[RMDB]
RNA sequence: GGGAACGACUCGAGUAGAGUCGAAAAGAUAUGGAAUACAGCGCAUGGCAAACCAUGUCGGAAACGACAUGGGUAGCCAUGAACUACGCUGUUCCUAAGUCAAAACGCGUAGGUUCGCCUACGCGAAGUAAGUCAUGUACUUCGGUACAUGACUUACAAAAGAAACAACAACAACAAC
Reactivity to 2A3 in 0.01 (KOAc 150mM, MgCl2 10mM, bicine 150mM(pH8.5), 24C), signal-to-noise 3, nucleotides 027 to 126: g020a020u080a040u150g030g020a080a050u200a250c000a000g000c010g030c000a000u010g010g000c000a110a170a130c010c000a000u000g000u000c000g000g030a050a070a050c010g000a000c010a010u000g000g020g010u020a000g000c000c000a000u000g000a000a000c000u100a040c030g000c020u000g000u000u000c010c000u040a240a010g060u040c040a020a000a080a100c000g010c000g010u000a010g010g080u030u060c300g110c060c010u000a000c020g000c000g000a010a000
Reactivity to DMS in 0.01 (KOAc 150mM, MgCl2 10mM, bicine 150mM(pH8.5), 24C), signal-to-noise 4, nucleotides 027 to 126: g000a030u010a300u010g000g000a020a070u010a120c020a020g000c000g010c010a000u000g000g030c000a020a300a300c000c000a000u000g010u010c000g000g010a100a090a190c000g020a000c010a010u000g000g000g000u000a150g000c000c000a000u000g000a080a070c170u000a300c040g020c000u000g000u000u000c010c000u000a080a100g010u000c060a070a060a120a160c010g000c000g000u000a000g000g030u000u020c220g020c000c000u000a010c000g000c000g000a010a080
Chemical mapping of a 177-nucleotide RNA with 2A3 and DMS. Conditions: 150 mM KOAc, 10 mM MgCl2 and 150 mM bicine (pH 8.5), 24 C. The DMS profile rests on 3,286 reads.